An RNA of 207 nucleotides, treated with 2A3 and DMS and read out base by base. DMS adducts were read by reverse transcription with MarathonRT. Conditions: 150 mM KOAc, 10 mM MgCl2 and 150 mM bicine (pH 8.5), 24 C. The data come from the RNA Mapping Database (RMDB), library M2RFOK. Reactivities are given for positions 27 through 156. For DMS, 1,985 sequencing reads were counted.

[RMDB]
RNA sequence: GGGAACGACUCGAGUAGAGUCGAAAAACUGCCAUACGUGGCAGAAACACGCCUUACCAGGACUAAACAGCGUGUCUAAAAAACAGUCCUUCAUACCUGAACUGGAGGGUAGAUCAGGAAUACUAAAAAAAUCGGGUGAAGUUCGCUUCACCCGAAAUCGUUAUAACGUGUUCGCACGUUAUAACGAAAAAGAAACAACAACAACAAC
Reactivity to 2A3 in 0.01 (KOAc 150mM, MgCl2 10mM, bicine 150mM(pH8.5), 24C), signal-to-noise 4, nucleotides 027 to 156: a010c000u000g000c010c000a020u020a060c220g080u030g000g000c000a000g020a010a010a000c000a000c000g000c000c000u050u070a040c030c050a020g010g020a030c030u070a130a050a030c010a000g000c010g000u000g030u030c130u050a010a020a010a010a000a000c040a000g020u000c030c000u010u050c040a070u050a090c000c000u040g030a070a070c030u040g000g080a100g030g050g020u050a020g010a050u040c020a010g000g040a020a060u150a200c110u230a040a020a050a020a010a020a150u040c000g010g010g000u000g000a010a000g000u030u100c130g040c090u000u000c000a000c000c000c000g000a000a000a000
Reactivity to DMS in 0.01 (KOAc 150mM, MgCl2 10mM, bicine 150mM(pH8.5), 24C), signal-to-noise 1, nucleotides 027 to 156: a210c000u020g000c010c020a070u000a080c130g060u010g000g040c010a010g010a140a190a040c000a000c020g000c000c030u000u000a020c060c090a120g040g050a090c020u000a120a060a090c100a040g010c020g020u000g020u000c160u020a000a030a030a120a010a030c050a060g000u020c000c000u000u000c090a150u000a040c030c000u010g020a080a150c080u020g010g010a120g000g010g020u000a010g000a090u000c090a030g010g020a200a120u000a280c110u000a000a020a020a020a030a080a240u010c000g000g010g000u000g000a020a030g070u000u000c300g010c000u000u030c000a010c020c000c000g000a000a000a070